The record gives the reactivity of an RNA of 177 nucleotides to DMS and 2A3. For DMS the reverse transcriptase was MarathonRT. The reactions ran in a buffer of 150 mM KOAc, 10 mM MgCl2 and 150 mM bicine (pH 8.5), at 24 C. For 2A3, 13,426 sequencing reads were counted.

[RMDB]
RNA sequence: GGGAACGACUCGAGUAGAGUCGAAAACGAAGAACGGCGCAUCGCAGCCUUCCAGGUCCAGGAUAUAGGCGUCGAUGCCCAGGCCCUUGUAGGCGUCGAUGAUAUCCUGGCGGUCAUCGAAUGCCGCAAUACGCAGUACAUUCGUGUACUGCGUAUUAAAAGAAACAACAACAACAAC
Reactivity to DMS in 0.01 (KOAc 150mM, MgCl2 10mM, bicine 150mM(pH8.5), 24C), signal-to-noise 8, nucleotides 027 to 126: c150g000a140a110g010a110a140c150g010g010c170g010c020a030u000c020g020c100a100g000c010c010u000u010c140c190a110g010g010u010c020c020a040g000g000a080u000a090u010a050g010g020c020g010u000c020g010a020u000g010c000c000c010a130g000g000c020c010c020u000u010g010u010a080g010g010c000g010u000c000g010a010u000g010a030u000a070u000c000c010u000g000g020c060g000g000u000c020a040u000c010g000a050a080u000g020c000c010g010c220
Reactivity to 2A3 in 0.01 (KOAc 150mM, MgCl2 10mM, bicine 150mM(pH8.5), 24C), signal-to-noise 5, nucleotides 027 to 126: c050g060a090a080g060a170a020c110g030g000c090g010c070a020u020c020g020c050a030g000c000c000u070u060c060c010a060g050g060u040c030c010a010g000g040a020u110a030u080a210g120g000c010g020u080c010g020a010u010g000c000c000c010a020g060g020c000c010c030u050u120g190u120a090g000g000c000g000u010c000g000a010u010g010a000u020a010u060c000c000u000g020g000c010g000g010u020c010a030u030c010g030a130a060u090g010c000c000g000c010